[RMDB]
RNA sequence: GGGAACGACUCGAGUAGAGUCGAAAACGUGCACGGUACGCCGUGCACGAAGGUGUUUGUCGCUCCACCAAAAUCGAAGCGAUAAAAAGUACGAAAGUACAAACGAUCGGCAUACGUGCCGAUCGAAGAAAAUGGCAUGCUUCGGCAUGCCAUUUUCAAAAGAAACAACAACAACAAC
Reactivity to 2A3 in 0.01 (KOAc 150mM, MgCl2 10mM, bicine 150mM(pH8.5), 24C), signal-to-noise 2, nucleotides 027 to 126: c020g000u020g000c000a000c010g000g000u030a020c230g070c020c000g040u000g000c000a000c000g040a020a010g000g010u000g000u030u140u090g040u030c000g020c010u030c020c000a000c000c050a230a030a000a030u170c020g160a110a000g010c000g010a000u050a000a160a000a000a000g020u010a010c070g040a220a000a050g000u000a040c070a020a110a000c000g000a000u000c000g000g020c000a040u040a170c190g140u020g000c000c000g010a000u000c000g000a010a010